Description
Chemical mapping of a 207-nucleotide RNA with DMS and 2A3. Reactivities are given for positions 27 through 156.

[RMDB]
RNA sequence: GGGAACGACUCGAGUAGAGUCGAAAAAGGUGAUUUCUCGUGCACCUUUAUCAAUGGAGGAACUCGACUUUGCUGUGGGUCCCAAAGGGACCUUAGGUGCAGACAGUUACCGGCGGUGAAGUGUGAGCAUAGGUUCGUGUCUUCGGACACGAACCAAGUAGUAAUAUCGCUUCGGCGAUAUUACUACAAAAGAAACAACAACAACAAC
Reactivity to DMS in 0.01 (KOAc 150mM, MgCl2 10mM, bicine 150mM(pH8.5), 24C), signal-to-noise 2, nucleotides 027 to 156: a040g000g020u000g000a140u000u010u000c090u000c110g030u010g000c010a030c010c000u000u000u000a070u020c110a080a270u000g040g010a140g020g020a080a040c040u000c030g000a130c030u000u000u010g000c020u020g020u000g020g030g000u000c000c000c010a070a140a120g040g030g000a040c010c010u010u000a010g000g020u000g000c030a150g020a080c180a100g020u020u000a110c000c040g010g000c110g000g040u000g030a000a100g040u000g000u010g000a050g050c060a130u000a090g000g000u000u000c000g030u000g010u020c020u000u010c300g050g000a050c000a020c000g000a000a010c000c000a010a050
Reactivity to 2A3 in 0.01 (KOAc 150mM, MgCl2 10mM, bicine 150mM(pH8.5), 24C), signal-to-noise 4, nucleotides 027 to 156: a000g060g010u040g020a130u060u110u090c070u050c040g070u140g000c010a000c000c020u020u060u030a100u050c040a040a040u100g070g020a050g060g050a060a030c010u020c070g010a030c030u030u030u050g000c010u010g000u080g040g000g000u030c030c000c020a080a070a090g010g000g010a000c010c000u030u100a050g010g000u030g000c010a010g090a230c030a010g010u060u080a020c000c010g000g010c030g000g010u020g030a010a000g080u100g040u080g130a020g030c050a080u110a170g000g000u000u000c010g000u010g000u000c010u020u050c180g060g000a000c000a000c000g000a000a000c000c000a000a000
About this RNA: Source: RMDB library M2RFPK, as collected in RNAgym.